[RMDB]
RNA sequence: GGGAACGACUCGAGUAGAGUCGAAAACGGAAAGUUCUUUGACCGCGUUACCUUUACUAGCGUCACGAUUUAGAAUUUCCAAAUAGAAAGGCGUGCUACGAACUAAAUGAUAUUUUUCGCGGAAUGACUCGGUAGGGAUGUUCGCAUCCCUACCGAGAAAAGAAACAACAACAACAAC
Reactivity to 2A3 in 0.01 (KOAc 150mM, MgCl2 10mM, bicine 150mM(pH8.5), 24C), signal-to-noise 2, nucleotides 027 to 126: c020g000g030a080a030a000g100u130u110c030u070u130u070g070a050c000c000g000c000g000u000u000a130c000c000u000u000u050a130c140u130a000g000c000g020u030c030a000c020g020a040u010u140u230a200g010a270a000u080u000u000c020c040a150a020a000u060a050g090a020a020a000g070g000c000g000u070g000c020u020a000c000g080a140a050c060u090a090a000a180u230g070a090u020a250u100u130u050u050u000c020g000c060g040g000a140a040u030g050a090
Reactivity to DMS in 0.01 (KOAc 150mM, MgCl2 10mM, bicine 150mM(pH8.5), 24C), signal-to-noise 1, nucleotides 027 to 126: c090g000g000a050a160a290g040u000u000c050u040u000u000g000a190c050c000g010c000g160u000u000a060c140c100u000u000u000a130c230u000a000g000c120g000u000c000a030c000g000a030u000u000u000a040g060a170a060u000u050u000c100c270a100a000a220u000a010g000a160a080a000g000g000c030g030u000g000c080u000a120c000g000a040a260c300u000a050a000a010u010g000a140u000a000u000u120u000u000u000c000g000c000g000g050a220a120u000g000a170

Structure probing data (2A3 and DMS) for a 177-nucleotide construct. Values cover nucleotides 27 to 126. Conditions: 150 mM KOAc, 10 mM MgCl2 and 150 mM bicine (pH 8.5), 24 C. DMS adducts were read by reverse transcription with MarathonRT. For 2A3, 551 sequencing reads were counted.